[RMDB]
Conditions: 150 mM KOAc, 10 mM MgCl2 and 150 mM bicine (pH 8.5), 24 C. This 177-nucleotide RNA was probed chemically with DMS and 2A3. DMS adducts were read by reverse transcription with MarathonRT. Reactivities are given for positions 27 through 126. Values are in units of 0.01, from 0 to 300, in steps of 10.
RNA sequence: GGGAACGACUCGAGUAGAGUCGAAAACAGACGGUAACCGAUGCACUGCCGAGUAGCGAAAGUCGUUCCUUUUGGAAUGGCCUAGUUGCCCAGAAGCCUCCCCUCAAAAUCGUUUCAGUCCAAAAUUCACGAUUUAAAGAUUCGUCUUUAAAUCGUGAAAAGAAACAACAACAACAAC
Reactivity to DMS in 0.01 (KOAc 150mM, MgCl2 10mM, bicine 150mM(pH8.5), 24C), signal-to-noise 2, nucleotides 027 to 126: c060a120g000a110c070g000g000u000a020a100c090c040g000a110u020g000c010a110c030u000g010c080c000g010a010g010u010a110g000c010g010a060a180a070g000u000c000g010u000u000c000c000u010u000u010u020g000g000a020a070u000g020g000c000c000u010a250g000u000u010g020c000c010c010a130g020a060a110g000c050c010u000c040c000c020c020u000c040a060a000a130a120u080c050g010u010u000u020c050a050g000u000c040c080a040a100a100a150u000u000
Reactivity to 2A3 in 0.01 (KOAc 150mM, MgCl2 10mM, bicine 150mM(pH8.5), 24C), signal-to-noise 7, nucleotides 027 to 126: c030a020g090a030c030g050g010u060a040a030c020c030g020a030u060g020c020a010c040u020g020c010c020g030a040g030u050a010g020c020g030a070a020a000g010u010c000g010u000u020c000c000u070u040u080u130g000g000a020a010u030g010g020c010c010u020a020g020u020u040g040c000c010c000a030g030a070a000g010c000c010u020c000c010c010c000u050c040a070a110a030a070u110c040g010u020u040u030c030a050g060u050c040c060a030a080a040a070u020u010